[RMDB]
RNA sequence: GGGAACGACUCGAGUAGAGUCGAAAAAAGGACAGAGUUCCUACAAAAGGUGCUCCAAGUGGGGAACAGAGAGCCCAAGUGGCUCAUCCAAGGUUGCACAGCAGACUGGAGUCAGACCUUCUGCUGGGGAAGGUGGGCAAGGUAGCACCGAUGGGCCUACAAAGCCAUCAUUCGUGAUGGCUUUGUAAAAAGAAACAACAACAACAAC
Reactivity to 2A3 in 0.01 (KOAc 150mM, MgCl2 10mM, bicine 150mM(pH8.5), 24C), signal-to-noise 2, nucleotides 027 to 156: a000a000g040g010a000c000a070g290a040g020u100u020c000c010u050a010c030a000a150a010a000g000g000u000g000c000u030c030c010a070a110g060u090g010g000g000g020a000a160c030a050g110a000g000a000g070c000c000c030a060a060g090u230g070g010c000u000c000a070u060c000c000a020a000g090g010u200u130g040c020a000c000a010g010c010a000g010a030c230u060g000g000a050g170u130c080a040g070a150c000c000u030u030c000u000g000c000u000g000g000g000g010a090a000g040g100u300g030g030g030c010a050a030g010g000u110a000g040c030a000c000c000g000a000u030g010g060g050c000c000
Reactivity to DMS in 0.01 (KOAc 150mM, MgCl2 10mM, bicine 150mM(pH8.5), 24C), signal-to-noise 1, nucleotides 027 to 156: a070a010g000g000a210c040a180g000a190g000u020u000c010c000u020a300c060a140a030a080a130g040g000u000g030c020u000c020c020a090a180g040u000g000g020g000g030a090a170c080a180g000a080g000a010g020c000c000c000a100a100g000u000g040g000c000u000c010a030u000c140c100a060a140g000g030u010u010g000c040a100c030a010g030c010a050g000a060c180u010g000g020a150g010u020c200a250g010a160c060c030u000u000c000u000g040c010u060g000g000g000g000a060a070g000g000u000g030g050g000c040a040a110g000g000u000a030g050c000a040c010c000g000a040u000g010g030g000c080c050

This 207-nucleotide RNA was probed chemically with 2A3 and DMS. Source: RMDB library OK3TST, as collected in RNAgym. DMS adducts were read by reverse transcription with MarathonRT.